[RMDB]
RNA sequence: GGGAACGACUCGAGUAGAGUCGAAAACAAAUGUUGUCCGAGAUCGAUGCUUUUCUGCUGAAUAGGAAGGAUGACGCAGUGGAUAGGCAAACAGCCGGGAUAAUUCUCACCAGCAAGAUGUACAAAACUUGUUGUGACGAUUCGUCGUCACAACAAGAAAAGAAACAACAACAACAAC
Reactivity to DMS in 0.01 (KOAc 150mM, MgCl2 10mM, bicine 150mM(pH8.5), 24C), signal-to-noise 2, nucleotides 027 to 126: c070a120a110a070u000g000u000u010g020u000c050c040g030a050g020a110u010c130g000a200u000g000c030u000u000u000u020c100u000g000c010u000g000a070a110u000a130g000g030a130a110g000g010a090u000g030a130c290g000c030a020g020u000g010g020a030u000a050g000g010c010a010a130a040c210a080g010c030c110g000g000g010a060u020a030a050u010u000c050u010c050a130c090c090a020g020c050a080a050g000a070u000g000u020a110c150a110a030a090a140
Reactivity to 2A3 in 0.01 (KOAc 150mM, MgCl2 10mM, bicine 150mM(pH8.5), 24C), signal-to-noise 2, nucleotides 027 to 126: c070a010a100a020u150g050u090u060g060u050c020c030g040a060g030a130u140c120g030a010u040g040c060u030u050u060u050c010u030g040c020u060g060a070a060u140a240g150g040a090a090g050g030a110u070g000a010c000g000c030a000g020u000g000g050a060u030a020g010g000c000a010a050a100c020a090g040c010c050g020g000g000a070u110a160a010u210u000c030u030c000a070c030c010a040g010c030a030a040g020a150u140g020u100a080c020a020a070a000a070